[RMDB]
RNA sequence: GGGAACGACUCGAGUAGAGUCGAAAACGCUCACCGCGUGCACGACCGACGGCACAGCCCCGGCCAAGGCCGCACCGACGCCGACGCCGACGAAGACCACGGAUUGGACCGCCCUUGAGAAAGCCGCGGGCAUUCCGCCCGAGCCGACCGGCGCCGAUCACACUAAGCUUUUCGAAGCUUAGUGUGAAAAAGAAACAACAACAACAAC
Reactivity to 2A3 in 0.01 (KOAc 150mM, MgCl2 10mM, bicine 150mM(pH8.5), 24C), signal-to-noise 1, nucleotides 027 to 156: c010g010c010u110c030a190c040c100g030c090g100u070g000c040a020c170g070a150c000c090g080a090c040g040g030c010a010c020a120g030c050c010c070c090g000g020c010c000a050a100g030g060c000c000g000c070a050c040c050g090a080c010g000c000c000g010a040c050g030c000c010g050a070c000g050a030a050g010a050c050c100a000c050g000g000a040u010u110g040g140a060c040c030g010c020c000c020u000u070g080a120g040a240a150a000g080c120c090g060c000g020g000g000c010a020u010u090c040c030g010c050c000c000g010a010g000c020c000g040a060c090c000g000g000c000g000c000c050g020a000

Background: Chemical mapping of a 207-nucleotide RNA with 2A3. For 2A3 the reverse transcriptase was SuperScript II with manganese. The reactions ran in a buffer of 150 mM KOAc, 10 mM MgCl2 and 150 mM bicine (pH 8.5), at 24 C.